[RMDB]
RNA sequence: GGGAACGACUCGAGUAGAGUCGAAAAACUUUUAGCGUUUGCUAGACGCUGUUCUUGCAAUGAUCUGGAUUUAGCGCACGGAGGUCCGAAAUCCAGAUCAACAUUUCGGACCUCCGCGCUAAUAAAAAUCAUCUCUUAACUUCGGUUAAGAGAUGAUAAAAGAAACAACAACAACAAC
Reactivity to DMS in 0.01 (KOAc 150mM, MgCl2 10mM, bicine 150mM(pH8.5), 24C), signal-to-noise 4, nucleotides 027 to 126: a100c110u000u010u010u010a020g010c000g010u000u020u010g010c090u000a060g010a030c020g000c040u000g000u010u000c040u000u000g020c100a080a110u000g020a120u000c050u000g020g000a160u000u010u000a010g010c010g010c050a090c180g040g020a010g000g010u000c010c000g010a010a010a010u000c170c140a140g010a100u010c160a060a060c170a050u000u000u000c000g000g010a020c000c000u000c000c000g000c010g020c010u000a000a010u010a010a050a050a120
Reactivity to 2A3 in 0.01 (KOAc 150mM, MgCl2 10mM, bicine 150mM(pH8.5), 24C), signal-to-noise 1, nucleotides 027 to 126: a000c030u120u170u130u190a040g040c000g090u040u000u110g080c040u060a030g030a020c010g000c230u130g100u110u040c020u030u130g070c070a050a130u110g030a130u150c110u100g050g020a080u010u050u020a000g000c000g030c030a020c130g000g030a000g000g000u020c000c000g000a000a000a000u040c070c050a020g000a090u070c000a010a000c000a020u000u000u030c000g000g000a000c000c000u000c020c000g010c010g000c020u010a010a010u010a010a040a000a000